[RMDB]
RNA sequence: GGGAACGACUCGAGUAGAGUCGAAAACGUGUCCGUCGGCGUAGCCGACAACAUGCCCAGGUAGCUCAGACCUUCAAGGCUACGGUGCGUUGCGACGCACGGUCUGAUUCUUCACAACGACGUUCACAAGAUCGGAUCACUUUCGAGUGAUCCGAAAUGAGGAACGGAUAUUCGUAUCCGUUCCUCAAAAAGAAACAACAACAACAAC
Reactivity to DMS in 0.01 (KOAc 150mM, MgCl2 10mM, bicine 150mM(pH8.5), 24C), signal-to-noise 1, nucleotides 027 to 156: c060g000u000g010u000c110c090g090u000c030g000g000c000g000u010a160g000c010c000g080a110c020a070a000c010a030u000g000c030c040c000a140g000g010u010a030g050c060u000c140a040g000a070c030c000u000u000c020a100a250g020g000c020u000a070c060g010g000u000g010c000g020u000u030g030c230g010a170c020g000c010a040c030g000g000u000c040u030g030a300u010u030c020u030u010c090a110c090a090a050c040g000a040c040g030u000u000c020a090c060a090a060g000a180u000c000g050g000a010u000c000a030c000u000u000u000c220g000a000g070u000g010a000u000c010c000g000a000a010a060
Reactivity to 2A3 in 0.01 (KOAc 150mM, MgCl2 10mM, bicine 150mM(pH8.5), 24C), signal-to-noise 2, nucleotides 027 to 156: c000g000u030g010u040c110c140g000u000c000g000g010c190g130u140a080g040c000c000g050a000c030a000a000c000a010u100g000c020c000c000a020g020g010u000a000g020c000u000c080a000g020a000c000c010u010u020c030a020a010g010g000c000u000a000c010g010g010u010g020c000g010u040u070g140c130g090a020c010g030c010a010c000g000g000u000c000u000g000a080u060u050c020u140u140c090a080c080a300a070c140g150a080c080g090u060u090c020a070c050a230a000g080a170u030c010g000g010a000u000c000a000c000u060u050u130c120g090a020g000u000g010a000u010c000c000g000a000a000a000
Chemical mapping of a 207-nucleotide RNA with DMS and 2A3.
For DMS the reverse transcriptase was MarathonRT.
For 2A3, 913 sequencing reads were counted.
It was measured as part of the RMDB library M2RFPK.